[RMDB]
RNA sequence: GGGAACGACUCGAGUAGAGUCGAAAAGAGAACUCGUGUGGACCGUUCAGUAACGAAAAUCCUGGUCAUAGUAGCAGCGUUAGUCGGGUUAGACCCCCGACGGCCGAACGAGUAAGGGUUCCUCAGCGAAACUUUCGCAAUUCGUUGCGAAAGUUUCAAAAGAAACAACAACAACAAC
Reactivity to DMS in 0.01 (KOAc 150mM, MgCl2 10mM, bicine 150mM(pH8.5), 24C), signal-to-noise 2, nucleotides 027 to 126: g000a080g030a040a020c010u010c000g010u010g000u040g010g000a120c000c020g010u000u010c170a100g010u030a040a010c080g020a090a060a060a190u070c300c020u000g000g000u000c050a140u060a090g030u000a080g010c070a100g010c080g000u000u010a030g000u040c010g000g020g010u000u000a100g010a300c210c220c020c050c000g000a020c030g000g020c020c000g000a040a010c030g020a000g000u000a090a090g010g000g000u000u000c010c000u020c180a030g000c250
Reactivity to 2A3 in 0.01 (KOAc 150mM, MgCl2 10mM, bicine 150mM(pH8.5), 24C), signal-to-noise 2, nucleotides 027 to 126: g080a000g010a020a000c000u010c000g020u030g060u100g040g080a210c020c000g010u070u070c090a130g010u030a050a020c020g020a020a000a040a190u090c000c020u040g050g000u070c010a050u050a170g120u170a050g040c030a000g000c000g030u050u060a050g020u050c000g030g000g000u040u040a010g090a050c000c020c000c000c000g000a000c000g010g000c000c010g020a010a010c000g000a000g000u040a010a100g030g020g000u010u000c000c000u110c030a030g050c030

This 177-nucleotide RNA was probed chemically with DMS and 2A3. The data come from the RNA Mapping Database (RMDB), libraries RFM100 and RFMREP.